Structure probing data (DMS and 2A3) for a 177-nucleotide construct.
2A3 is a SHAPE reagent: it acylates the 2'-hydroxyl of flexible nucleotides of all four kinds.
The data come from the RNA Mapping Database (RMDB), library TTRDEL.
For DMS the reverse transcriptase was MarathonRT.
Conditions: 150 mM KOAc, 10 mM MgCl2 and 150 mM bicine (pH 8.5), 24 C.
For 2A3, 6,992 sequencing reads were counted.
RNA sequence: GGGAACGACUCGAGUAGAGUCGAAAAGAUAUGGAUUUCGUUGAUCUACUGGGCGUUUGACGUCGGAAACGACCGAGCCUUGUAGGGAGAAAUCCUAAGUCAAAACUCUAAAGUUCGCUUUAGAGAACACGUACACUAUGUUCGCAUAGUGUACGUGAAAAGAAACAACAACAACAAC
Reactivity to DMS in 0.01 (KOAc 150mM, MgCl2 10mM, bicine 150mM(pH8.5), 24C), signal-to-noise 4, nucleotides 027 to 126: g010a040u000a300u000g000g000a010u020u000u000c000g010u000u010g000a030u000c000u000a000c010u000g010g010g010c010g030u000u010u020g020a130c300g000u000c000g010g000a100a090a160c000g010a000c000c010g000a080g010c010c010u000u000g000u000a010g000g000g000a010g000a010a010a000u000c000c010u000a020a090g000u020c030a060a080a110a190c000u000c000u000a000a000a000g000u000u000c240g020c000u000u010u000a000g000a010g020a110a170
Reactivity to 2A3 in 0.01 (KOAc 150mM, MgCl2 10mM, bicine 150mM(pH8.5), 24C), signal-to-noise 3, nucleotides 027 to 126: g030a010u070a050u200g000g000a010u000u000u000c020g120u230u020g010a010u010c010u000a010c000u020g000g000g060c060g130u080u260u280g120a100c050g010u030c000g000g010a100a110a080c010g000a010c020c010g030a020g000c000c000u020u010g000u000a000g000g010g010a010g000a010a000a010u000c000c000u010a150a000g030u010c040a030a040a070a140c010u000c000u020a010a000a030g010u030u100c280g060c130u010u020u020a000g000a000g000a020a030